[RMDB]
The data come from the RNA Mapping Database (RMDB), library OK1LIB. Structure probing data (2A3 and DMS) for a 177-nucleotide construct. For DMS, 1,103 sequencing reads were counted. Conditions: 150 mM KOAc, 10 mM MgCl2 and 150 mM bicine (pH 8.5), 24 C.
RNA sequence: GGGAACGACUCGAGUAGAGUCGAAAACUUAGGGCUCUGGUGGUCUUUUGUGGGAGGUUUCGGAACUUCGGGCAUUACAUUUGGAGGUCCCACCGAGAUCUCCCCCGAGCCCACCAGACUUCUGGUCCUGCCAUAUGAUCUUCGGAUCAUAUGGCAGAAAAGAAACAACAACAACAAC
Reactivity to 2A3 in 0.01 (KOAc 150mM, MgCl2 10mM, bicine 150mM(pH8.5), 24C), signal-to-noise 4, nucleotides 027 to 126: c040u090u120a080g020g010g050c040u000c000u000g020g000u010g000g040u020c000u000u130u050u130g120u180g010g000g020a010g000g020u020u000u000c010g010g020a120a130c090u170u180c170g000g000g000c020a050u090u170a140c050a160u140u210u300g210g030a110g030g120u150c000c000c010a010c000c000g000a000g000a000u000c000u030c020c000c000c000c000g000a000g000c020c020c000a000c000c000a000g010a010c000u030u010c000u000g050g000u050c010
Reactivity to DMS in 0.01 (KOAc 150mM, MgCl2 10mM, bicine 150mM(pH8.5), 24C), signal-to-noise 1, nucleotides 027 to 126: c050u000u040a070g000g000g060c300u010c000u000g060g000u010g020g000u040c020u000u000u000u000g010u060g050g000g000a020g030g010u020u000u020c000g000g000a190a100c120u060u050c180g040g000g040c070a050u010u030a250c090a250u050u100u050g000g000a110g000g000u030c040c000c210a120c000c000g040a010g000a000u000c000u010c000c000c000c040c140g020a000g000c080c020c000a010c000c020a000g020a000c000u000u000c010u000g010g010u010c000